Chemical mapping of a 177-nucleotide RNA with DMS and 2A3. The data come from the RNA Mapping Database (RMDB), library VIROID. The RNA was probed in 150 mM KOAc, 10 mM MgCl2 and 150 mM bicine (pH 8.5) at 24 C.
RNA sequence: GGGAACGACUCGAGUAGAGUCGAAAAUGGGGUCGACUGGCCUCCGGUGGCGAAGCUGAGUUGAGCUUCGCUCUUCUCUUCUUAGCUGUAACCGGACCGGUCCCCUUCACCCGGCGCUGCUUGCCGCGCAUGUUUCAUUCUUCGGAAUGAAACAUGCAAAAGAAACAACAACAACAAC
Reactivity to DMS in 0.01 (KOAc 150mM, MgCl2 10mM, bicine 150mM(pH8.5), 24C), signal-to-noise 3, nucleotides 027 to 126: u010g000g000g000g010u000c180g020a010c000u000g000g010c040c140u000c000c010g020g020u000g000g000c010g010a090a300g010c020u010g000a030g030u000u000g010a020g020c000u010u000c300g010c010u000c000u000u000c010u000c010u000u000c020u010u000a300g010c000u000g000u010a070a060c010c010g010g000a080c000c000g000g000u000c000c010c000c010u000u000c130a070c000c010c000g010g000c010g030c060u000g010c050u000u000g010c040c020g020c110
Reactivity to 2A3 in 0.01 (KOAc 150mM, MgCl2 10mM, bicine 150mM(pH8.5), 24C), signal-to-noise 2, nucleotides 027 to 126: u090g000g010g000g010u170c130g050a000c000u010g010g010c000c010u010c010c000g000g010u010g010g020c010g000a010a000g000c000u010g000a010g030u000u020g010a000g010c020u250u140c270g000c000u020c000u010u000c000u000c000u000u010c010u010u020a000g000c000u000g010u030a020a000c000c000g000g000a000c010c000g010g000u000c020c000c000c000u010u060c020a050c010c000c000g030g020c030g010c030u160g040c030u110u130g020c060c010g000c030